An RNA of 177 nucleotides, treated with 2A3 and DMS and read out base by base. Values cover nucleotides 27 to 126. The RNA was probed in 150 mM KOAc, 10 mM MgCl2 and 150 mM bicine (pH 8.5) at 24 C. For DMS the reverse transcriptase was MarathonRT. It was measured as part of the RMDB libraries RFM100 and RFMREP.

RNA sequence: GGGAACGACUCGAGUAGAGUCGAAAAGCCGGGAAGCUUACCGGGAUCGACAGUUGUAUGAAGGCCAGGCUGAAGACCUUGCCGGACUAGCUGAGAGGAGGUGCAUGGCCGUCGUCAGUUCGUACCGUCAAGGUAUUUUAUUCGUAAAAUACCUUGAAAAAGAAACAACAACAACAAC
Reactivity to 2A3 in 0.01 (KOAc 150mM, MgCl2 10mM, bicine 150mM(pH8.5), 24C), signal-to-noise 9, nucleotides 027 to 126: g050c010c010g000g020g040a120a030g050c070u090u080a070c010c010g020g020g030a070u070c010g060a050c020a040g010u050u040g120u160a110u090g080a060a020g010g000c010c010a000g020g000c040u110g090a120a010g030a080c000c000u010u020g030c010c000g000g000a010c020u030a020g030c030u030g020a030g010a040g120g050a050g010g030u040g010c040a060u090g050g000c010c020g050u040c010g020u020c010a030g020u030u050c010g010u030a070c010c010g010
Reactivity to DMS in 0.01 (KOAc 150mM, MgCl2 10mM, bicine 150mM(pH8.5), 24C), signal-to-noise 9, nucleotides 027 to 126: g000c020c010g000g010g010a100a110g020c100u010u010a080c060c020g000g010g010a080u010c040g010a090c070a070g010u000u000g010u010a060u010g010a220a100g000g000c010c120a040g000g010c030u010g010a140a110g000a120c020c010u000u000g010c020c020g000g000a180c130u020a060g000c030u010g000a270g000a090g000g010a070g010g010u010g000c060a070u000g010g000c030c030g010u000c030g000u000c060a060g000u010u010c050g010u010a110c040c040g010